[RMDB]
RNA sequence: GGGAACGACUCGAGUAGAGUCGAAAACUUGGUGAUUUCUACCACCUUACUACUGAAGAAGACACCAUUCCAGUGGACCACUGUGACCUAAGAAGCAUUCAGCCAUCAUGAUGUGGCCUUUACCUCCGUGCAGAGACAAGUUCGCUUGUCUCUGCACAAAAGAAACAACAACAACAAC
Reactivity to 2A3 in 0.01 (KOAc 150mM, MgCl2 10mM, bicine 150mM(pH8.5), 24C), signal-to-noise 4, nucleotides 027 to 126: c000u010u060g030g000u070g040a270u020u020u010c030u030a080c010c000a030c010c000u040u120a080c050u050a000c040u050g050a100a000g050a080a000g100a110c000a010c040c000a030u050u050c010c000a010g030u050g060g070a050c070c000a000c010u040g060u080g030a040c010c010u050a130a050g040a050a010g080c030a050u090u120c020a010g010c040c000a050u060c030a050u140g110a060u120g050u020g060g010c000c000u060u100u050a100c010c010u100c050c030
Reactivity to DMS in 0.01 (KOAc 150mM, MgCl2 10mM, bicine 150mM(pH8.5), 24C), signal-to-noise 1, nucleotides 027 to 126: c100u000u000g000g000u000g010a150u020u000u000c000u160a280c150c000a000c000c040u000u000a020c210u000a000c060u040g000a130a060g000a030a020g000a110c000a060c050c020a040u000u060c100c000a010g000u000g000g000a200c100c030a000c070u030g010u000g000a130c100c050u000a030a000g000a060a010g020c010a060u000u000c150a090g000c060c030a070u040c070a030u100g020a060u050g020u000g000g000c000c010u000u060u010a090c040c000u010c020c000